[RMDB]
RNA sequence: GGGAACGACUCGAGUAGAGUCGAAAAGCCCCACCCCUCCCGCCCGCGGCACACAGUCACCCGCCCGAGUGAACGUCACCAACUCGGCUGGAUUCCAAGCUGGUUGCCUGUCCUACGCUCAGCGCAAAUGAGAGAUAUGUUUCGACAUAUCUCUCAUAAAAGAAACAACAACAACAAC
Reactivity to 2A3 in 0.01 (KOAc 150mM, MgCl2 10mM, bicine 150mM(pH8.5), 24C), signal-to-noise 5, nucleotides 027 to 126: g030c000c000c000c000a020c020c010c010c000u010c020c000c010g020c000c010c010g020c020g020g020c020a010c000a000c010a040g060u060c020a030c030c000c010g030c010c030c020g010a010g020u060g040a110a040c070g060u050c030a020c080c010a030a050c010u020c020g020g010c020u030g020g020a100u120u070c030c010a040a010g010c020u030g030g030u130u060g030c010c010u040g040u050c000c000u030a030c030g010c010u040c030a040g000c030g000c060a100a090
Reactivity to DMS in 0.01 (KOAc 150mM, MgCl2 10mM, bicine 150mM(pH8.5), 24C), signal-to-noise 5, nucleotides 027 to 126: g030c110c010c000c140a250c060c030c030c010u000c050c000c060g020c060c030c040g020c070g020g010c020a040c050a080c060a050g010u020c060a080c030c020c040g020c160c010c030g000a040g000u000g010a100a110c080g010u000c040a050c050c030a090a040c020u000c020g010g000c050u000g000g000a150u000u000c050c050a100a110g000c030u000g000g000u010u010g020c030c010u000g000u000c000c020u000a110c080g000c010u000c020a040g020c030g020c080a060a120